[RMDB]
Conditions: 150 mM KOAc, 10 mM MgCl2 and 150 mM bicine (pH 8.5), 24 C. This 177-nucleotide RNA was probed chemically with 2A3 and DMS.
RNA sequence: GGGAACGACUCGAGUAGAGUCGAAAACAACGAAGGCAACUGCACCAGAUCGACAAGACGCAGAUUCGCAUCAUGUAGAGCAUCUUUAGGGGUUCGAUCCUCGAGUUGAAGAUGUGAAUGGAUCGAGCCUAUCGAUACCGUUCGCGGUAUCGAUAGGAAAAGAAACAACAACAACAAC
Reactivity to 2A3 in 0.01 (KOAc 150mM, MgCl2 10mM, bicine 150mM(pH8.5), 24C), signal-to-noise 5, nucleotides 027 to 126: c030a040a000c030g090a080a040g050g000c010a070a030c040u040g000c000a030c000c030a030g010a120u040c020g030a040c050a100a020g040a030c030g000c050a030g010a070u030u050c020g030c020a030u020c000a020u080g080u170a020g020a010g050c020a020u030c030u030u070u120a050g030g000g000g000u120u100c060g040a130u090c010c000u030c020g090a110g050u080u120g080a060a030g020a060u040g050u030g070a020a060u070g010g010a020u020c030g010a010g020
Reactivity to DMS in 0.01 (KOAc 150mM, MgCl2 10mM, bicine 150mM(pH8.5), 24C), signal-to-noise 5, nucleotides 027 to 126: c080a090a130c210g000a060a110g010g020c050a070a090c020u000g000c040a060c040c060a050g000a070u000c060g030a070c080a060a050g010a060c100g020c070a080g000a110u010u010c040g030c040a040u010c040a100u020g010u010a060g000a160g020c100a040u000c060u000u020u020a090g000g020g000g000u000u010c060g010a050u000c000c000u000c070g010a080g000u020u010g000a100a110g010a040u020g000u020g000a100a070u040g000g000a040u010c010g010a090g000